RNA sequence: GGGAACGACUCGAGUAGAGUCGAAAAGAUAUGGAACGUCAGUACUAGGUGUAGACAUGCCUUGAGGGUCGGAAACGACCCAAGAUGAGGGCAACAGCUACACCUAGUACUGAGCGUUCCUAAGUCACGGUAGUACAUAGUUCGCUAUGUACUACCGAAAAGAAACAACAACAACAAC
Reactivity to DMS in 0.01 (KOAc 150mM, MgCl2 10mM, bicine 150mM(pH8.5), 24C), signal-to-noise 4, nucleotides 027 to 126: g010a050u000a300u030g000g000a010a010c000g000u000c010a020g000u000a000c000u000a000g010g000u000g010u000a010g020a050c090a210u000g000c000c000u000u000g010a240g000g000g020u000c010g000g000a110a100a300c010g010a020c000c000c010a010a030g010a270u000g010a170g000g010g000c000a030a090c300a170g000c010u000a010c000a010c010c000u010a000g010u000a000c010u000g000a020g020c010g020u000u000c000c000u000a020a070g010u010c060a280
Reactivity to 2A3 in 0.01 (KOAc 150mM, MgCl2 10mM, bicine 150mM(pH8.5), 24C), signal-to-noise 3, nucleotides 027 to 126: g040a010u110a020u290g000g000a000a040c000g050u040c040a000g000u010a000c000u000a000g020g000u000g010u010a030g090a160c060a160u080g000c000c010u030u040g070a100g020g000g000u000c020g010g010a050a110a020c040g010a020c030c030c030a000a000g070a040u300g300a140g210g070g000c000a090a060c070a180g060c000u000a000c000a000c010c000u000a000g000u000a000c000u010g000a000g000c000g000u000u000c000c000u000a000a000g000u010c020a010
Chemical mapping of a 177-nucleotide RNA with DMS and 2A3. The RNA was probed in 150 mM KOAc, 10 mM MgCl2 and 150 mM bicine (pH 8.5) at 24 C. The DMS profile rests on 5,266 reads. Source: RMDB library TTRINS, as collected in RNAgym. For 2A3, 7,398 sequencing reads were counted.